Chemical mapping of a 177-nucleotide RNA with 2A3.
RNA sequence: GGGAACGACUCGAGUAGAGUCGAAAAAGCCAUGGAGCCUUCGCCGAUUAUGACACUGAAGCGUAACCGAACACCAUAUUUUGAGAUUCUGCUACGCGCAGUGCCAUGCUCGGCGCGUUGGCUCCAUCGAUACCGCAGCGUUCGCGCUGCGGUAUCGAAAAGAAACAACAACAACAAC
Reactivity to 2A3 in 0.01 (KOAc 150mM, MgCl2 10mM, bicine 150mM(pH8.5), 24C), signal-to-noise 2, nucleotides 027 to 126: a000g120c000c000a010u030g020g000a030g000c000c000u000u020c000g020c000c000g000a000u000u020a000u000g000a000c000a030c000u040g020a300a050g010c000g000u000a000a000c020c050g030a000a020c050a100c070c060a100u050a300u200u240u190u210g190a240g010a160u020u020c000u000g000c000u000a000c000g010c000g000c030a000g010u000g040c020c000a000u000g010c000u000c000g000g020c040g000c000g040u050u010g020g010c000u010c000c000a000u000

Conditions: 150 mM KOAc, 10 mM MgCl2 and 150 mM bicine (pH 8.5), 24 C. The 2A3 profile rests on 865 reads. It was measured as part of the RMDB library RFM100. Values are in units of 0.01, from 0 to 300, in steps of 10.